Conditions: 150 mM KOAc, 10 mM MgCl2 and 150 mM bicine (pH 8.5), 24 C. Structure probing data (DMS and 2A3) for a 177-nucleotide construct.
RNA sequence: GGGAACGACUCGAGUAGAGUCGAAAAAAUCUUGGUUGAGCUCGACGGUGACGUCAAUGGACACAAGUUUUCCGUCUCAGGAGAGGGUGAAGGUGAUGCAACCUACGGAAAGUUGACCCUUAAGUUCGGUUCUAACUGACUUCGGUCAGUUAGAACCAAAAGAAACAACAACAACAAC
Reactivity to DMS in 0.01 (KOAc 150mM, MgCl2 10mM, bicine 150mM(pH8.5), 24C), signal-to-noise 1, nucleotides 027 to 126: a020a030u000c040u000u000g000g020u020u000g000a060g000c100u020c300g000a060c000g000g000u120g000a130c040g010u010c020a020a060u020g050g000a090c030a040c050a010a030g000u000u050u000u000c000c010g000u040c070u020c030a020g060g000a130g000a030g050g000g000u000g000a100a000g000g000u000g010a100u010g010c050a050a060c010c040u000a070c150g000g000a150a020a030g000u010u000g000a120c030c000c000u000u000a100a150g000u080u050c030
Reactivity to 2A3 in 0.01 (KOAc 150mM, MgCl2 10mM, bicine 150mM(pH8.5), 24C), signal-to-noise 2, nucleotides 027 to 126: a000a000u000c020u010u140g030g000u060u140g000a000g200c060u160c000g020a000c000g130g050u190g030a000c000g090u140c100a210a160u300g080g020a020c060a000c000a220a030g030u000u000u010u010c000c020g080u070c110u090c070a100g000g090a130g010a040g000g000g100u120g060a080a000g070g020u070g070a130u150g020c000a000a000c000c000u040a030c020g100g050a200a000a000g070u100u150g180a140c000c040c000u070u130a160a000g030u070u280c050